[RMDB]
RNA sequence: GGGAACGACUCGAGUAGAGUCGAAAAGCUCGCAACGCGAAGGUCCAUCCGAUGCUGCGUGUCACGGGGGGAUGGUACGAGGAAGAUGAAGCGUGGGCGAUUGUCGCGAUCACUUUUCCCCACCUCUACUAUGAUCGGAUUUCGAUCCGAUCAUAGUAAAAGAAACAACAACAACAAC
Reactivity to DMS in 0.01 (KOAc 150mM, MgCl2 10mM, bicine 150mM(pH8.5), 24C), signal-to-noise 3, nucleotides 027 to 126: g040c070u000c020g000c090a060a110c090g030c050g000a070a130g020g000u000c060c050a040u040c030c030g010a120u060g010c010u010g000c040g010u010g000u020c030a040c040g000g000g000g000g000g000a060u000g010g020u020a010c060g000a120g020g000a090a040g000a050u020g010a060a070g000c190g060u020g000g010g000c080g000a090u020u020g040u010c020g010c000g010a080u010c070a040c070u010u000u010u000c030c010c000c050a120c070c060u020c070u000
Reactivity to 2A3 in 0.01 (KOAc 150mM, MgCl2 10mM, bicine 150mM(pH8.5), 24C), signal-to-noise 9, nucleotides 027 to 126: g040c020u020c020g010c040a070a080c060g020c030g090a100a040g090g020u010c030c020a060u030c020c020g040a040u130g060c030u050g010c030g020u060g050u070c030a030c070g030g000g000g000g000g010a030u040g020g030u040a030c030g020a040g070g050a050a070g020a080u120g060a060a020g030c040g030u070g030g040g000c030g090a110u030u190g070u060c030g000c020g040a030u040c010a020c040u030u010u040u050c010c000c000c000a060c010c030u040c010u010
Source: RMDB library OK1LIB, as collected in RNAgym. Structure probing data (DMS and 2A3) for a 177-nucleotide construct. The RNA was probed in 150 mM KOAc, 10 mM MgCl2 and 150 mM bicine (pH 8.5) at 24 C. For DMS, 6,934 sequencing reads were counted.